Annotation
The record gives the reactivity of an RNA of 177 nucleotides to 2A3 and DMS.
RNA sequence: GGGAACGACUCGAGUAGAGUCGAAAAGAUUAGGCAGAUAACUACUAUUACGCGUCUUGCCACUGUAUUGUAAAGUAAACAACAAGAUAUAAGUUUAAUACACCUACGCGACAAGAUGAAUCAGCAACCAUUAGCUGUGGUUCGCCACAGCUAAUGGAAAAGAAACAACAACAACAAC
Reactivity to 2A3 in 0.01 (KOAc 150mM, MgCl2 10mM, bicine 150mM(pH8.5), 24C), signal-to-noise 2, nucleotides 027 to 126: g070a050u090u150a020g020g080c040a000g050a130u080a160a070c040u150a010c060u040a110u140u080a020c030g000c030g000u040c020u060u040g020c000c030a010c030u040g030u030a040u110u080g080u100a050a090a190g090u030a050a010a050c010a040a000c040a080a080g060a060u070a000u040a300a000g000u030u040u000a050a030u060a020c000a000c060c000u030a030c070g000c030g000a020c010a060a010g020a040u080g040a040a070u090c030a020g070c000a020a060
Reactivity to DMS in 0.01 (KOAc 150mM, MgCl2 10mM, bicine 150mM(pH8.5), 24C), signal-to-noise 2, nucleotides 027 to 126: g000a130u000u010a050g010g000c070a070g000a080u010a080a070c190u010a090c050u000a100u000u000a070c090g000c020g000u020c010u000u010g010c020c010a080c100u010g060u010a010u020u000g000u000a030a060a160g000u000a000a000a000c020a080a140c130a110a090g000a110u010a080u000a070a060g000u000u000u000a020a060u000a040c070a010c140c050u000a010c020g000c050g000a000c090a040a070g000a060u000g000a080a040u000c070a070g000c040a060a130

Annotation: For DMS, 858 sequencing reads were counted. It was measured as part of the RMDB library M2PK90. The RNA was probed in 150 mM KOAc, 10 mM MgCl2 and 150 mM bicine (pH 8.5) at 24 C.